[RMDB]
RNA sequence: GGGAACGACUCGAGUAGAGUCGAAAAGAUGUUCGCUGAUUCGUCAGCCGCAUGCCCAGGUGGCCGCGAUCUUCAAGGCUACGGCGCGGAUAGGUCCGCGCUGAUCGUUUUCCUCCUACGACGCUAUAAAAGGAACGAAGGUUCGCCUUCGUUCCAAGAUUUGCAUGACGUUCGCGUCAUGCAAAUCAAAAGAAACAACAACAACAAC
Reactivity to 2A3 in 0.01 (KOAc 150mM, MgCl2 10mM, bicine 150mM(pH8.5), 24C), signal-to-noise 1, nucleotides 027 to 156: g030a000u030g010u130u110c080g030c000u000g000a040u080u040c130g080u050c130a000g000c010c000g000c000a000u050g090c010c010c020a020g010g010u000g020g000c010c010g080c060g000a000u010c000u000u010c010a010a030g010g010c000u000a000c000g000g000c000g000c000g000g020a020u110a270g230g090u060c000c000g000c000g000c010u000g010a040u000c000g000u030u020u180u020c010c080u040c000c020u070a120c120g080a070c040g050c100u090a040u050a180a110a060a000g010g000a000a010c000g000a000a000g000g030u040u140c150g020c000c010u000u030c000g000u000u000c000c000a000a010